RNA sequence: GGGAACGACUCGAGUAGAGUCGAAAACUCUUCUGCUUCGGCAGAAGAGAAAAUAACGCUGGCGUGGGACACAGCCGGAGCUAGCCUCAGAUAGACUCAGUAAAAUCGGAUAGUUCGCUAUCCGAAAGCUAUAGUGGAGGUUCGCCUCCACUAUAGCAAAAGAAACAACAACAACAAC
Reactivity to 2A3 in 0.01 (KOAc 150mM, MgCl2 10mM, bicine 150mM(pH8.5), 24C), signal-to-noise 1, nucleotides 027 to 126: c000u010c000u000u020c000u010g010c020u050u040c240g150g000c000a030g010a000a000g000a000g000a020a020a000a000u030a010a030c060g000c050u040g030g020c030g050u110g070g000g030a030c030a020c030a120g020c010c000g010g000a010g040c020u040a010g010c000c000u010c070a040g020a040u080a040g070a070c010u020c100a050g090u180a020a090a020a160u030c000g000g000a010u010a010g000u060u030c160g000c080u010a000u000c000c000g030a020a020a000
Reactivity to DMS in 0.01 (KOAc 150mM, MgCl2 10mM, bicine 150mM(pH8.5), 24C), signal-to-noise 2, nucleotides 027 to 126: c000u000c000u010u000c000u000g020c000u000u010c180g060g040c000a010g000a010a000g000a020g000a020a030a050a130u010a080a120c120g000c030u000g010g010c020g020u000g000g010g010a100c090a090c080a170g010c050c020g020g000a100g000c020u000a080g000c030c010u000c050a070g000a090u000a040g000a120c060u010c030a100g020u000a080a040a120a120u000c000g040g000a010u000a020g010u000u010c260g010c000u000a000u000c000c000g000a020a020a020